[RMDB]
RNA sequence: GGGAACGACUCGAGUAGAGUCGAAAAGCUAUGACUUCUAUGUAUAAGCAAGCACGUGCUGAAGACAAGAAAGCAAAAAUUGUCAGUGCUAUGCAAACUAUGUUGUUUGGUAUGAUUAAGAAGCUCGGAAGACAAUCCUUCGGGAUUGUCAAAAGAAACAACAACAACAAC
Reactivity to 2A3 in 0.01 (KOAc 150mM, MgCl2 10mM, bicine 150mM(pH8.5), 24C), signal-to-noise 2, nucleotides 027 to 129: g020c030u030a050u220g000a000c050u080u020c000u100a020u070g190u060a000u070a180a040g000c000a020a010g000c000a000c020g140u150g140c000u110g080a040a080g050a000c010a000a030g020a180a070a070g140c050a000a000a150a020a080u000u000g000u030c020a000g020u000g030c000u090a300u100g030c020a000a010a010c030u000a060u190g020u000u000g000u010u080u030g000g000u010a100u110g080a050u150u000a090a000g030a050a000g050c050u070c020g030g010a120a000
Reactivity to DMS in 0.01 (KOAc 150mM, MgCl2 10mM, bicine 150mM(pH8.5), 24C), signal-to-noise 4, nucleotides 027 to 129: g000c020u080a070u060g000a020c060u000u030c050u010a000u070g120u000a100u060a090a150g000c000a000a000g080c090a020c090g020u090g010c060u060g000a080a170g010a030c010a000a000g050a090a130a130g080c250a020a080a070a130a050u000u000g010u050c020a140g110u040g050c060u060a050u030g020c070a020a010a020c090u050a070u000g010u000u000g000u030u010u000g060g030u060a060u040g030a050u000u000a100a020g010a040a060g030c070u000c060g020g000a100a120
Background:
An RNA of 170 nucleotides, treated with 2A3 and DMS and read out base by base. It was measured as part of the RMDB library 15KLIB. The reactions ran in a buffer of 150 mM KOAc, 10 mM MgCl2 and 150 mM bicine (pH 8.5), at 24 C. For 2A3, 2,093 sequencing reads were counted.